[RMDB]
RNA sequence: GGGAACGACUCGAGUAGAGUCGAAAAGAAAAAGAAAUCAAUCCGGAACCACGAACGAAAUACGUGGAAACGUCGAAUGCACAACGACGACCCGGAAAUUGUGCAUUCACAAAAGAAAGAAAAGAAACGUAUCAGUGAUAUUCGUAUCACUGAUACGAAAAGAAACAACAACAACAAC
Reactivity to DMS in 0.01 (KOAc 150mM, MgCl2 10mM, bicine 150mM(pH8.5), 24C), signal-to-noise 3, nucleotides 027 to 126: g020a030a040a090a110a090g000a080a180a090u040c070a080a130u040c090c020g010g000a090a180c010c010a010c020g020a040a060c110g020a060a120a060u030a080c000g030u000g000g010a080a100a080c140g010u050c160g020a000a000u000g010c020a000c000a000a010c010g010a300c010g020a100c010c020c000g000g000a040a150a080u000u000g020u000g000c000a020u000u020c010a100c100a050a030a100a080g010a060a040a110g010a080a070a070a070g000a030a050a140
Reactivity to 2A3 in 0.01 (KOAc 150mM, MgCl2 10mM, bicine 150mM(pH8.5), 24C), signal-to-noise 5, nucleotides 027 to 126: g110a010a110a020a000a020g230a040a080a050u150c070a020a050u040c050c010g030g020a050a040c010c000a000c010g040a110a010c050g090a210a070a040u160a080c010g000u010g020g000a140a070a030c050g060u080c090g020a020a000u010g010c010a000c000a000a010c020g060a010c010g060a050c000c000c000g000g050a010a030a000u010u000g000u000g000c010a000u010u010c020a010c030a040a100a000a010g210a070a090a020g120a010a060a010a010g140a030a090a020
About this RNA: Structure probing data (DMS and 2A3) for a 177-nucleotide construct. For 2A3, 13,853 sequencing reads were counted. It was measured as part of the RMDB library OK1LIB.